[RMDB]
RNA sequence: GGGAACGACUCGAGUAGAGUCGAAAACUCGGAAAGAUCGAAGGGCUUCGUCAGAUAAUCGUCGGCGCCUGCGUUCAGUCCCUGAAUGCGGUCGGAAAUCUGGUCCAGGGCCGUCAAUAUGAUGACAUGCUCAUCACUAUUUCGAUAGUGAUGAGCAAAAAGAAACAACAACAACAAC
Reactivity to 2A3 in 0.01 (KOAc 150mM, MgCl2 10mM, bicine 150mM(pH8.5), 24C), signal-to-noise 1, nucleotides 027 to 126: c000u040c010g030g100a180a080a000g070a110u140c030g020a020a070g110g030g000c030u110u060c070g050u030c010a000g000a080u080a130a130u180c090g070u020c000g000g000c050g170c000c100u150g000c000g000u000u020c010a010g010u100c080c030c010u010g050a020a010u070g010c040g020g000u050c010g000g010a090a070a000u010c010u100g000g010u040c000c080a070g010g030g000c000c030g000u020c010a070a090u160a090u220g150a030u050g020a020c020a070
Reactivity to DMS in 0.01 (KOAc 150mM, MgCl2 10mM, bicine 150mM(pH8.5), 24C), signal-to-noise 2, nucleotides 027 to 126: c030u020c010g010g010a100a100a110g020a050u010c040g000a150a070g010g000g010c020u000u000c130g010u000c000a010g020a040u000a080a080u010c150g000u000c020g010g000c020g000c130c020u010g010c060g050u010u000c000a030g010u020c060c130c040u000g000a030a020u000g010c010g000g000u000c010g000g000a060a030a030u000c020u020g020g010u010c040c100a100g000g010g000c000c020g000u000c040a050a070u000a070u040g000a140u000g000a030c140a160